Annotation
This 207-nucleotide RNA was probed chemically with DMS and 2A3. For 2A3 the reverse transcriptase was SuperScript II with manganese. The RNA was probed in 150 mM KOAc, 10 mM MgCl2 and 150 mM bicine (pH 8.5) at 24 C. For 2A3, 8,557 sequencing reads were counted.
RNA sequence: GGGAACGACUCGAGUAGAGUCGAAAACGUGAACACCUGCAACCCGCUAACCUCCAUCACGCGACCUGAUAGAUUCAGCGUUAGAGCGCUUGACCAAAAGUUAUCCGAUACAACAAUCACAUCGCCUACGGUUGGGAUCAUACCUUCCAGACCUGUACCUAGAUAUCGUUUUCGAACGAUAUCUAGGAAAAGAAACAACAACAACAAC
Reactivity to DMS in 0.01 (KOAc 150mM, MgCl2 10mM, bicine 150mM(pH8.5), 24C), signal-to-noise 3, nucleotides 027 to 156: c020g000u000g010a090a080c060a070c050c000u000g020c030a120a090c050c000c000g020c040u000a080a070c020c000u030c020c050a130u000c020a060c030g040c020g010a070c030c030u000g020a130u000a140g010a170u000u000c080a090g010c050g050u000u000a130g000a110g030c020g010c040u000u010g020a080c050c030a040a060a090a120g020u000u000a080u000c040c040g010a150u010a070c060a070a050c070a110a090u000c050a080c050a110u000c050g030c020c010u010a050c040g000g010u000u010g020g000g000a120u000c050a090u010a050c040c030u000u000c020c020a080g010a130c010c010u000g030u000a120
Reactivity to 2A3 in 0.01 (KOAc 150mM, MgCl2 10mM, bicine 150mM(pH8.5), 24C), signal-to-noise 7, nucleotides 027 to 156: c050g040u050g060a070a020c030a050c040c020u040g010c030a060a060c020c000c020g000c040u060a060a060c010c000u030c020c020a070u060c030a020c030g030c030g030a040c000c010u030g030a030u040a140g160a080u100u060c030a020g020c010g070u050u100a090g010a040g090c030g020c050u030u090g050a070c040c000a040a060a020a020g030u080u050a080u050c030c030g020a030u060a140c070a080a020c020a090a070u090c040a030c030a130u060c050g050c030c010u050a040c040g030g000u020u030g050g000g000a010u060c030a030u070a070c010c000u040u030c020c010a040g030a080c020c020u060g020u070a050